[RMDB]
RNA sequence: GGGAACGACUCGAGUAGAGUCGAAAACUUAGCAGUUACGCUAAUACCGUCACUUCUCUUGAUGAUAUUUUUUCACUGCUGCUCGGUAUCGCGUUAGAGAAACCCGUUACUCAACGGAUCGUUACUCAUAUCACGCUGGAUGGAGACCCAAUGUGUCAGCUUCAGUGUUUUUCGAAACACUGAAGCUAAAAGAAACAACAACAACAAC
Reactivity to 2A3 in 0.01 (KOAc 150mM, MgCl2 10mM, bicine 150mM(pH8.5), 24C), signal-to-noise 4, nucleotides 027 to 156: c020u050u030a010g000c040a020g010u070u110a030c050g010c040u020a030a030u040a120c020c010g020u000c030a030c050u100u040c040u030c040u130u110g040a090u040g080a070u140a300u130u090u030u010u030u050c060a040c020u080g050c010u000g000c010u070c010g050g000u050a080u120c050g010c020g060u040u070a030g000a000g020a010a020a030c010c020c010g010u010u040a150c090u120c220a040a000c010g000g020a050u100c070g010u020u030a050c000u000c020a040u050a050u250c030a020c030g030c030u060g060g030a060u060g050g030a020g020a050c000c020c000a030a100u170g050u050g030u120c030
Reactivity to DMS in 0.01 (KOAc 150mM, MgCl2 10mM, bicine 150mM(pH8.5), 24C), signal-to-noise 1, nucleotides 027 to 156: c020u000u010a030g020c000a090g010u000u000a080c070g010c060u000a030a030u000a030c020c000g000u000c010a050c190u000u000c170u000c080u010u030g060a020u010g010a010u000a000u000u000u000u000u000u000c060a080c090u000g020c020u010g000c000u000c000g040g030u010a080u000c050g030c060g000u000u020a100g010a060g020a050a020a040c020c000c010g030u000u000a120c170u000c190a090a060c020g000g010a000u000c040g000u010u000a100c020u000c030a160u000a090u000c110a080c050g040c030u000g000g000a140u000g000g000a120g020a080c020c000c060a050a140u000g030u010g000u000c060